[RMDB]
RNA sequence: GGGAACGACUCGAGUAGAGUCGAAAAUGGGCACUCCCACACCACAUCUGAAGUAGACAGUGCCUCUCAGAUUCAGUCAAUUCAAAGUAUGAACCCAGUGAGGCCAAAUCUAAUUUUUCAAAGAAGGUUAGACAUCCAGAAUUUGAAUGCACAGUCACCCAUGCUCGAUAUUCGUAUCGAGCAUGGGAAAAGAAACAACAACAACAAC
Reactivity to 2A3 in 0.01 (KOAc 150mM, MgCl2 10mM, bicine 150mM(pH8.5), 24C), signal-to-noise 1, nucleotides 027 to 156: u030g000g020g000c010a000c020u060c000c040c000a000c020a010c020c050a040c000a030u070c040u090g090a100a020g060u090a010g080a050c090a040g000u000g090c020c000u030c020u010c010a000g020a030u030u040c040a030g100u000c050a000a120u010u080c010a070a110a050g070u060a110u170g030a040a010c020c020c020a040g070u050g110a110g000g040c000c030a020a110a080u030c000u020a020a030u030u110u100u040u100c050a040a010a050g120a070a090g040g020u100u090a010g010a080c000a010u080c030c050a010g000a040a030u000u000u000g020a100a040u080g050c050a050c020a040g000u020c000a040